[RMDB]
RNA sequence: GGGAACGACUCGAGUAGAGUCGAAAAUGUCUUGAACGAUUUACCAUAGAAUAACAAAUUUAUGAUUUUGUGUCUUUGUUUGUUCGGACACAUUAUCUAUACGAAUAAGAACGGUUGAGGGCAUUCGCAAAAUUGUGUAGUUCGCUACACAAUUUUGAAAAGAAACAACAACAACAAC
Reactivity to 2A3 in 0.01 (KOAc 150mM, MgCl2 10mM, bicine 150mM(pH8.5), 24C), signal-to-noise 2, nucleotides 027 to 126: u000g000u000c010u110u260g050a050a010c010g020a020u080u120u230a040c030c000a050u130a050g140a180a170u200a200a000c060a070a130a070u150u170u040a140u220g000a010u070u000u000u000g020u000g000u010c000u060u070u040g090u080u050u080g050u050u020c050g020g000a020c010a000c010a010u000u000a000u000c010u070a100u010a050c040g070a060a050u150a150a070g030a040a030c100g040g120u050u100g040a070g020g000g000c020a050u050u110c000g000
Reactivity to DMS in 0.01 (KOAc 150mM, MgCl2 10mM, bicine 150mM(pH8.5), 24C), signal-to-noise 3, nucleotides 027 to 126: u000g010u010c010u000u000g020a150a100c040g000a050u000u010u010a060c060c040a060u000a130g000a170a090u010a080a140c070a080a110a120u010u000u010a070u010g010a020u000u010u000u000g010u000g010u000c000u010u000u000g020u000u000u000g010u000u000c050g000g000a010c010a010c000a000u000u000a000u000c000u000a100u000a100c100g010a050a070u000a060a100g010a100a080c110g000g000u010u010g000a050g010g010g010c030a040u000u000c110g000